[RMDB]
RNA sequence: GGGAACGACUCGAGUAGAGUCGAAAAUGAGCUUGAACCUUUAGAGUCUGGAAGGAGGCAGUUCGAACUCGCUCAUACAGGGGUUCAAGAACUGAAAGAUCAGAGGGAAGAGUCAGCCAAAAGAGGACCAUACUCGGGGAUUCGUCCCCGAGUAUGGAAAAGAAACAACAACAACAAC
Reactivity to DMS in 0.01 (KOAc 150mM, MgCl2 10mM, bicine 150mM(pH8.5), 24C), signal-to-noise 2, nucleotides 027 to 126: u000g020a150g010c010u000u030g000a170a130c030c000u000u010u000a140g000a130g000u000c050u010g010g000a120a040g020g010a070g010g020c060a080g010u010u000c030g000a090a060c000u000c050g010c100u000c120a140u020a090c300a160g000g020g010g000u010u030c010a040a070g010a020a070c050u000g010a080a090a070g000a090u010c060a030g000a020g000g010g030a010a190g000a020g000u020c040a050g010c030c030a060a050a090a080g000a120g030g000a180
Reactivity to 2A3 in 0.01 (KOAc 150mM, MgCl2 10mM, bicine 150mM(pH8.5), 24C), signal-to-noise 1, nucleotides 027 to 126: u070g010a020g050c020u010u060g090a030a050c000c000u030u050u160a100g040a060g070u030c050u060g040g080a100a070g050g050a090g030g120c010a020g010u030u060c030g010a010a020c010u000c050g160c050u040c130a020u110a140c080a020g030g000g050g000u030u000c010a020a080g040a040a010c000u020g040a080a040a060g040a110u110c000a000g000a040g000g000g010a050a050g000a040g070u040c030a010g000c020c020a030a090a000a020g120a050g000g010a010
This 177-nucleotide RNA was probed chemically with DMS and 2A3. For 2A3 the reverse transcriptase was SuperScript II with manganese. The data come from the RNA Mapping Database (RMDB), library OK2TRN. DMS adducts were read by reverse transcription with MarathonRT.